[RMDB]
RNA sequence: GGGAACGACUCGAGUAGAGUCGAAAAGGGUGAUGUCUCCUAACCUUUAUCAAUGGGGGCACUCGGUCGUACUGUGGGUAGAAAUUUUAUUUCGUGCCUACCUUAGACGCUUGUCGUCGGGAGUAUGUGGGACUGAUGAACUUCGGUUCAUCAGUAAGUAUUCAGGGGGCUUCGGCCCCCUGAAUACAAAAGAAACAACAACAACAAC
Reactivity to 2A3 in 0.01 (KOAc 150mM, MgCl2 10mM, bicine 150mM(pH8.5), 24C), signal-to-noise 1, nucleotides 027 to 156: g090g000g030u220g030a070u020g000u040c010u000c030c030u080a050a110c000c000u050u180u220a160u190c110a050a090u250g020g000g000g010g010c010a030c000u060c000g000g000u000c030g000u060a000c030u020g030u030g010g000g030u020a010g180a000a020a000u180u190u160u160a100u100u140u020c080g030u120g040c000c000u010a020c000c000u060u210a010g000a010c000g000c060u240u160g220u300c030g000u010c000g020g000g010a040g000u070a070u180g050u070g020g010g010a000c000u000g000a000u000g000a000a000c000u000u090c300g070g000u000u000c000a000u000c000a000g000u000a010a010